[RMDB]
RNA sequence: GGGAACGACUCGAGUAGAGUCGAAAAGCACGUCCGGCAAGGCCCGUGCGAACACUUGAGCUCCGGCUUGGCCGCUCUUGUGGAUUAGGACGUUCUAGCUCCGGCUUGGCCGCUAGUUCGUCCGAAAGGCAUCCUUGACCUUCGGGUCGAGGAUGCCAAAAGAAACAACAACAACAAC
Reactivity to 2A3 in 0.01 (KOAc 150mM, MgCl2 10mM, bicine 150mM(pH8.5), 24C), signal-to-noise 4, nucleotides 027 to 126: g000c000a010c020g030u060c030c000g040g120c160a080a110g080g000c000c030c060g000u010g010c000g030a060a020c030a010c010u020u040g000a000g000c030u020c100c070g130g000c060u160u170g130g000c000c020g020c030u010c000u010u020g000u010g040g030a080u050u250a050g000g000a010c000g000u000u000c010u000a000g000c030u070c110c020g160g040c130u090u250g080g020c010c000g010c010u010a000g020u000u000c010g000u010c000c000g000a010a010a000
Reactivity to DMS in 0.01 (KOAc 150mM, MgCl2 10mM, bicine 150mM(pH8.5), 24C), signal-to-noise 2, nucleotides 027 to 126: g000c050a050c050g000u000c060c030g010g000c130a090a050g000g000c160c080c050g010u000g010c030g040a120a080c010a000c060u000u000g000a030g070c020u020c060c050g000g000c020u050u040g000g010c010c270g000c010u010c000u030u010g010u000g010g000a110u020u040a050g000g000a000c000g030u020u010c000u010a000g000c020u000c060c050g030g000c000u060u050g000g030c000c020g040c000u000a020g000u000u000c010g020u000c040c000g000a030a070a080
The record gives the reactivity of an RNA of 177 nucleotides to 2A3 and DMS. The RNA was probed in 150 mM KOAc, 10 mM MgCl2 and 150 mM bicine (pH 8.5) at 24 C. It was measured as part of the RMDB library OK1LIB. For 2A3 the reverse transcriptase was SuperScript II with manganese. For DMS the reverse transcriptase was MarathonRT.